[RMDB]
RNA sequence: GGGAACGACUCGAGUAGAGUCGAAAAACAGCGACGCAGAUGUGGUGGUGCCCCCCGGCCUGGCCGACGUGCCGCCGCCGCAAUCCGGGGGCGCGAAGGGAAACACGUGGCGGCCGCGCAGCCUCGAGUAUCAGUCCUCAUUCGUGAGGACUGAUACAAAAGAAACAACAACAACAAC
Reactivity to 2A3 in 0.01 (KOAc 150mM, MgCl2 10mM, bicine 150mM(pH8.5), 24C), signal-to-noise 1, nucleotides 027 to 126: a000c000a030g040c000g000a040c010g000c010a050g040a300u030g060u010g060g130u090g030g030u050g000c000c000c010c030c000c000g010g000c000c050u050g020g070c030c020g140a220c100g060u080g020c010c010g020c000c050g020c000c000g000c000a030a010u030c030c020g000g000g010g090g000c000g000c010g050a010a030g180g010g010a050a150a030c010a000c070g040u050g040g000c020g000g080c040c010g000c030g030c020a040g010c000c000u060c040g030a040
Reactivity to DMS in 0.01 (KOAc 150mM, MgCl2 10mM, bicine 150mM(pH8.5), 24C), signal-to-noise 2, nucleotides 027 to 126: a090c110a190g020c010g020a120c090g000c060a020g020a080u030g020u000g000g030u000g010g010u010g000c000c000c010c010c010c000g000g000c090c090u010g020g000c040c040g010a060c150g000u000g020c110c050g010c110c040g000c040c040g030c130a050a130u020c060c050g000g000g040g000g010c050g040c040g000a120a130g010g010g000a100a080a100c060a080c080g030u000g000g020c020g000g000c060c070g040c050g010c110a090g010c060c010u010c080g020a270
The record gives the reactivity of an RNA of 177 nucleotides to 2A3 and DMS. For 2A3, 1,197 sequencing reads were counted. The reactions ran in a buffer of 150 mM KOAc, 10 mM MgCl2 and 150 mM bicine (pH 8.5), at 24 C.